[RMDB]
RNA sequence: GGGAACGACUCGAGUAGAGUCGAAAAUUCAAUAUAUAAGAGCUCUCGUCUAUUGCAAGAUAUAAGUUACUGAGCAUGUUAUGUUGGAAAGAUAACAUGCUGUAGUAAUAAUGAAUUGCGGAACGCCUUAGGCUGGAAACAGAGCAGGGUUAGCAAUCCGUAUAGGACAGUUCGCUGUCCUAUACGGAAAAGAAACAACAACAACAAC
Reactivity to 2A3 in 0.01 (KOAc 150mM, MgCl2 10mM, bicine 150mM(pH8.5), 24C), signal-to-noise 2, nucleotides 027 to 156: u040u010c010a010a020u050a020u040a040u070a300a040g040a050g030c000u020c010u040c070g050u030c050u030a060u040u240g000c050a050a030g030a020u070a020u030a220a100g020u010u000a000c000u010g000a000g000c000a010u000g000u000u000a040u040g190u190u040g120g040a140a070a040g080a040u010a000a000c000a010u000g000c000u010g000u000a000g010u000a000a010u030a020a050u090g090a030a090u030u020g000c020g030g040a140a020c030g030c010c010u020u040a040g000g000c000u030g060g000a100a020a030c030a020g000a000g020c000a000g050g000g030u060u130a010g020c010a010a030u000
About this RNA
This 207-nucleotide RNA was probed chemically with 2A3. The RNA was probed in 150 mM KOAc, 10 mM MgCl2 and 150 mM bicine (pH 8.5) at 24 C. 2A3 adducts were read by reverse transcription with SuperScript II with manganese. For 2A3, 993 sequencing reads were counted. Values cover nucleotides 27 to 156.